[RMDB]
RNA sequence: GGGAACGACUCGAGUAGAGUCGAAAACGAUCUGAUCUACUAGGGAUCGUACCGAUCCUAGUCGUGACUAGCUGAUCUCUAGUCAUGCUGACAUGUAGUACGUCAUGCAUCGGAUCCGCGCGAUCCACGGAAAGAUGCUGUUCGCAGCAUCUUUCCGAAAAGAAACAACAACAACAAC
Reactivity to 2A3 in 0.01 (KOAc 150mM, MgCl2 10mM, bicine 150mM(pH8.5), 24C), signal-to-noise 2, nucleotides 027 to 126: c040g000a020u010c010u040g030a040u010c010u080a080c020u060a110g100g050g050a030u000c010g030u080a150c000c210g020a010u010c000c020u040a050g030u040c050g020u010g000a010c000u000a000g020c050u040g030a070u050c060u000c000u040a000g000u000c000a010u010g000c030u030g040a040c000a060u210g050u180a080g110u080a090c140g020u030c010a040u150g040c010a010u060c020g010g000a010u000c030c000g090c010g000c050g030a010u000c020c010a030
Reactivity to DMS in 0.01 (KOAc 150mM, MgCl2 10mM, bicine 150mM(pH8.5), 24C), signal-to-noise 2, nucleotides 027 to 126: c070g010a030u000c030u000g000a030u000c150u010a060c040u000a080g030g030g010a010u000c000g020u010a100c150c120g000a020u000c010c010u010a150g000u000c100g040u000g000a010c000u000a000g000c070u000g030a050u000c120u000c000u000a010g000u000c020a040u000g010c050u010g000a060c100a190u000g010u010a120g020u010a100c220g010u010c010a040u010g010c210a070u020c070g010g000a040u000c000c160g010c100g000c080g010a010u000c000c250a130

The record gives the reactivity of an RNA of 177 nucleotides to 2A3 and DMS. For 2A3 the reverse transcriptase was SuperScript II with manganese. Conditions: 150 mM KOAc, 10 mM MgCl2 and 150 mM bicine (pH 8.5), 24 C. Source: RMDB library OK2TRN, as collected in RNAgym.